[RMDB]
RNA sequence: GGGAACGACUCGAGUAGAGUCGAAAACGGAUCAACUUCGGUUGAUCCGAAAGGGACGGGUCGGGAGGGGGAUACUCGCGGUCCCAAGAUGAAUCCAGACUGAAAGGAAGGUCUUCGGACCUUCCAAGUAAUCUAAAUACUUCGGUAUUUAGAUUACAAAAGAAACAACAACAACAAC
Reactivity to DMS in 0.01 (KOAc 150mM, MgCl2 10mM, bicine 150mM(pH8.5), 24C), signal-to-noise 2, nucleotides 027 to 126: c020g000g010a000u010c010a000a010c000u000u000c150g040g000u010u000g000a010u020c000c000g000a010a050a220g000g000g000a100c150g000g020g000u010c110g000g030g010a140g010g010g000g040g000a050u010a010c040u010c040g000c060g020g010u010c010c010c010a020a090g010a100u000g010a040a070u000c020c030a080g010a070c110u010g000a070a080a150g000g000a000a010g000g010u000c010u000u000c120g020g010a000c000c000u000u000c000c000a000a060
Reactivity to 2A3 in 0.01 (KOAc 150mM, MgCl2 10mM, bicine 150mM(pH8.5), 24C), signal-to-noise 4, nucleotides 027 to 126: c000g010g000a000u000c000a010a010c010u050u050c150g100g010u000u010g000a010u020c000c000g000a010a000a000g020g000g160a060c100g020g010g210u280c110g020g030g080a170g010g050g000g000g000a020u030a080c020u000c020g040c030g010g030u010c000c000c000a020a010g080a060u170g050a050a070u050c060c020a040g090a140c070u120g060a120a060a030g000g010a010a010g000g000u000c000u000u050c160g030g000a000c000c000u000u010c000c000a000a000
Conditions: 150 mM KOAc, 10 mM MgCl2 and 150 mM bicine (pH 8.5), 24 C. Chemical mapping of a 177-nucleotide RNA with DMS and 2A3. For DMS, 2,097 sequencing reads were counted. It was measured as part of the RMDB library M2PK50.